[RMDB]
RNA sequence: GGGAACGACUCGAGUAGAGUCGAAAAGAAACUGGAUCGACAAGGGUGUAAAGAUCGCUCUUUUACUCGGCAUGAUACCACCGUUAUCGGGUCAACAGAGUAGUUGCAAAUGACAACAAUGCUCAGGAAGGGGUAGCACCGUUCGCGGUGCUACCAAGUCGUGUAGACGAUUCGUCGUCUACACGACAAAAGAAACAACAACAACAAC
Reactivity to 2A3 in 0.01 (KOAc 150mM, MgCl2 10mM, bicine 150mM(pH8.5), 24C), signal-to-noise 5, nucleotides 027 to 156: g030a010a100a010c140u140g040g030a050u060c040g020a030c070a100a060g120g070g010u080g020u110a130a180a020g050a050u100c020g010c050u030c020u010u080u020u060a100c050u030c020g010g000c010a010u080g000a010u020a030c000c000a000c000c000g090u050u050a020u070c030g000g000g000u000c000a010a020c040a070g010a000g020u040a010g010u020u010g030c070a050a180a290u240g040a140c000a020a000c010a020a190u110g010c000u010c040a010g080g100a060a040g040g040g000g000u000a000g000c000a000c010c010g010u030u020c130g000c010g050g000u000g000c000u000a000c000c000a000a010
Reactivity to DMS in 0.01 (KOAc 150mM, MgCl2 10mM, bicine 150mM(pH8.5), 24C), signal-to-noise 1, nucleotides 027 to 156: g010a020a030a140c030u000g050g030a050u000c010g030a080c120a080a010g000g020g040u000g000u000a070a120a140g000a080u000c100g010c050u000c030u000u000u000u000a140c090u010c000g070g040c020a030u000g030a150u000a060c020c010a120c030c040g030u000u000a020u000c090g030g010g000u000c000a100a100c100a080g000a060g050u000a100g030u040u020g010c020a080a060a160u010g030a150c060a040a010c030a030a080u000g010c050u000c010a140g010g000a050a080g020g040g030g030u010a020g010c010a010c000c000g030u000u000c160g050c020g030g030u000g040c000u010a000c000c000a020a050